[RMDB]
RNA sequence: GGGAACGACUCGAGUAGAGUCGAAAAGUCGCCGCGUCUACAUCAACGCCCAGCGCGGGCGAGGGAGGCGUCCUACGGGGGUGACCCAUUCGCCGGCAUGGUAGAGGACGGCAAGAUUGCCGCGACGCGAUCGGUGCUAUUUCGAUAGCACCGAUCGAAAAGAAACAACAACAACAAC
Reactivity to 2A3 in 0.01 (KOAc 150mM, MgCl2 10mM, bicine 150mM(pH8.5), 24C), signal-to-noise 2, nucleotides 027 to 126: g000u010c010g000c030c010g000c000g020u000c020u050a060c010a160u050c010a110a030c050g050c000c000c050a060g090c300g000c050g160g030g000c000g000a020g060g030g000a200g010g050c030g000u040c010c000u060a170c130g120g010g020g000g050u090g120a230c000c030c010a060u070u060c030g020c000c000g040g010c040a060u060g000g040u080a080g000a030g060g050a020c000g000g020c010a010a030g070a050u110u300g000c050c050g000c030g020a020c000g000
Reactivity to DMS in 0.01 (KOAc 150mM, MgCl2 10mM, bicine 150mM(pH8.5), 24C), signal-to-noise 2, nucleotides 027 to 126: g020u020c000g060c050c220g030c010g010u000c010u010a120c080a090u000c040a050a140c080g010c110c000c040a130g030c100g010c050g010g000g020c000g020a030g010g000g020a120g000g020c030g000u000c000c000u000a120c100g040g040g000g000g020u010g000a200c030c020c020a170u000u010c040g000c030c010g000g010c030a050u000g010g000u020a120g010a120g000g010a080c020g000g020c120a060a040g000a040u000u010g020c010c140g000c040g000a040c060g020
Chemical mapping of a 177-nucleotide RNA with 2A3 and DMS.
The data come from the RNA Mapping Database (RMDB), library OK2TRN.
The DMS profile rests on 1,763 reads.
Reactivities are given for positions 27 through 126.
Conditions: 150 mM KOAc, 10 mM MgCl2 and 150 mM bicine (pH 8.5), 24 C.